[RMDB]
RNA sequence: GGGAACGACUCGAGUAGAGUCGAAAAAACUCAGCUAGGGAGAGUAUAACAUUCAUGUUGACGAGACCUAGACGAAACACAGAGGAAAAUUAUGAAUCACUGGAUAGUAUUAGUAAUGACUCUGUGUAAAACUCUUCUACGUUCGCGUAGAAGAGAACAACAGUAGGUUCUUCGGAACCUACUGUUGAAAAGAAACAACAACAACAAC
Reactivity to 2A3 in 0.01 (KOAc 150mM, MgCl2 10mM, bicine 150mM(pH8.5), 24C), signal-to-noise 4, nucleotides 027 to 156: a000a000c010u010c010a000g020c000u010a000g020g030g000a050g010a040g070u100a120u090a300a010c060a050u140u190c090a060u270g010u030u050g040a030c040g010a020g050a050c000c000u010a010g000a020c020g010a000a030a000c010a000c000a000g000a010g030g060a090a160a070a000u020u020a010u050g060a020a040u090c020a040c070u070g130g060a170u230a300g030u020a030u070u030a050g010u000a020a010u030g020a020c000u000c000u000g010u000g000u000a000a000a000a020c000u000c000u000u000c000u000a010c000g010u010u050c160g010c010g090u000a000g000a000a000g000a000g000a020a010
Reactivity to DMS in 0.01 (KOAc 150mM, MgCl2 10mM, bicine 150mM(pH8.5), 24C), signal-to-noise 2, nucleotides 027 to 156: a040a040c050u020c000a110g020c040u000a020g000g000g000a220g020a180g020u000a020u000a040a040c040a080u010u000c150a060u010g010u000u000g010a060c030g000a300g000a060c010c000u000a050g010a280c120g000a100a110a040c010a000c010a020g000a040g000g000a070a120a110a060u000u010a010u010g000a060a080u000c080a110c040u000g030g040a120u010a090g010u000a150u000u000a070g010u000a030a020u000g000a150c000u000c000u000g010u010g000u000a010a010a030a130c010u000c000u010u000c010u000a020c010g000u000u000c300g030c020g000u000a000g000a000a010g000a000g000a050a070